[RMDB]
Source: RMDB library OK3TST, as collected in RNAgym.
Structure probing data (2A3) for a 207-nucleotide construct.
2A3 adducts were read by reverse transcription with SuperScript II with manganese.
RNA sequence: GGGAACGACUCGAGUAGAGUCGAAAAAAGACAUGUUUAACCAGCUUUUGGGCCUGACUAACGUCGGCUUAUCUGGCGCUGGCGCUCAGUCCGCAGCGGCUACCGGGACCACCAACGCACUGACCGCACUCGCGGGCCAGAAGGGCCAGAUCCUGGGGUUUAUGUGCCAGUUCGCUGGCACAUAAACAAAAGAAACAACAACAACAAC
Reactivity to 2A3 in 0.01 (KOAc 150mM, MgCl2 10mM, bicine 150mM(pH8.5), 24C), signal-to-noise 1, nucleotides 027 to 156: a000a000g170a050c070a110u140g000u040u160u040a050a040c000c010a010g030c010u060u010u090u180g010g000g010c030c060u080g040a010c020u150a220a050c090g000u000c010g030g010c010u040u020a040u090c020u030g040g000c070g020c030u000g010g000c080g060c010u030c060a010g080u000c010c010g080c050a010g010c000g030g000c000u020a090c210c040g000g010g080a030c020c020a110c010c030a120a050c040g000c030a040c100u000g020a040c010c000g000c030a070c060u070c070g000c000g040g000g000c030c020a090g010a050a010g040g000g010c010c010a030g020a040u020c000c000u000g010g040g050

The RNA was probed in 150 mM KOAc, 10 mM MgCl2 and 150 mM bicine (pH 8.5) at 24 C. High 2A3 reactivity points to a flexible backbone, as in loops and unpaired stretches.